[RMDB]
This 177-nucleotide RNA was probed chemically with DMS and 2A3. DMS adducts were read by reverse transcription with MarathonRT. Values cover nucleotides 27 to 126. For 2A3, 985 sequencing reads were counted. Source: RMDB library OK2TST, as collected in RNAgym.
RNA sequence: GGGAACGACUCGAGUAGAGUCGAAAAUGCGCACUGACCGAACAAGAACCUCGAUGGUCCGACUACCAGCGUGAGGCUGAGGUGUCGUCCGACACCGCGUGGCGGCUUGAGGAAGCGCUGUGUCAGGAGAUGAGCCGGAUUUCGAUCCGGCUCAUCUAAAAGAAACAACAACAACAAC
Reactivity to DMS in 0.01 (KOAc 150mM, MgCl2 10mM, bicine 150mM(pH8.5), 24C), signal-to-noise 1, nucleotides 027 to 126: u010g000c060g020c030a140c030u000g010a050c000c040g000a060a070c120a080a100g000a130a140c020c000u000c020g000a080u000g020g000u020c040c010g000a130c020u000a080c030c020a000g000c020g000u010g000a120g000g000c020u000g010a020g030g000u000g000u000c010g020u000c240c140g010a030c010a000c010c000g040c170g020u020g000g020c020g000g000c010u000u010g000a050g000g000a120a060g010c120g010c020u010g000u000g000u000c020a020g010g090
Reactivity to 2A3 in 0.01 (KOAc 150mM, MgCl2 10mM, bicine 150mM(pH8.5), 24C), signal-to-noise 1, nucleotides 027 to 126: u160g030c040g030c040a070c060u030g000a030c000c010g030a030a110c070a080a040g040a140a110c000c000u010c010g100a140u140g040g150u100c020c040g100a260c010u010a040c000c000a030g020c050g050u110g250a070g300g000c020u020g000a020g010g000u020g000u000c030g080u190c070c110g000a000c000a000c010c010g000c010g010u010g030g000c010g020g030c040u010u150g040a010g000g000a020a040g030c080g040c020u090g020u010g000u040c030a020g020g040